The record gives the reactivity of an RNA of 207 nucleotides to 2A3 and DMS. The 2A3 profile rests on 2,604 reads. 2A3 is a SHAPE reagent: it acylates the 2'-hydroxyl of flexible nucleotides of all four kinds. Source: RMDB library M2RFPK, as collected in RNAgym. For 2A3 the reverse transcriptase was SuperScript II with manganese. The reactions ran in a buffer of 150 mM KOAc, 10 mM MgCl2 and 150 mM bicine (pH 8.5), at 24 C. For DMS, 1,714 sequencing reads were counted.
RNA sequence: GGGAACGACUCGAGUAGAGUCGAAAACGUCCCCGUCGUACAGAAUGGUAACAUAUCUCUCCAAAUAUCUGAGCUUGGGUAUACGGGGAAACCCAACCCCUUGGAAAGAUUGGGUAUAUGGCUAAAUUACAUCGAUUGUACUUCGGUACAAUCGAAACUCGAAUAUACACUUCGGUGUAUAUUCGAGAAAAGAAACAACAACAACAAC
Reactivity to 2A3 in 0.01 (KOAc 150mM, MgCl2 10mM, bicine 150mM(pH8.5), 24C), signal-to-noise 2, nucleotides 027 to 156: c040g090u030c010c000c010c020g100u100c030g020u070a100c050a100g120a190a120u140g070g020u120a210a060c020a030u060a060u040c070u010c030u030c070c020a080a130a090u170a130u040c030u030g040a040g200c020u050u040g030g000g000u030a040u010a090c050g040g000g000g000a050a030a020c000c000c000a010a020c000c000c000c000u030u020g030g050a070a030a040g050a040u050u030g000g000g010u010a010u000a010u060g060g020c060u070a110a070a050u170u110a090c030a090u040c000g000a000u000u000g000u000a000c000u010u030c110g080g000u000a000c000a000a000u000c000g000a010a000a000
Reactivity to DMS in 0.01 (KOAc 150mM, MgCl2 10mM, bicine 150mM(pH8.5), 24C), signal-to-noise 1, nucleotides 027 to 156: c050g000u000c030c000c000c140g030u010c030g090u000a150c050a180g000a120a090u010g000g010u010a090a120c040a030u000a020u000c070u000c090u000c030c030a060a160a060u020a110u000c030u020g010a060g030c150u000u010g030g010g050u000a090u000a060c050g000g060g060g050a060a080a160c030c010c000a110a040c070c010c000c040u000u010g000g020a080a100a050g010a030u000u030g020g050g010u000a050u010a080u000g000g000c050u000a050a080a090u010u000a050c140a120u010c010g000a000u000u000g000u000a000c020u000u020c300g000g000u020a020c010a010a000u000c000g000a000a050a040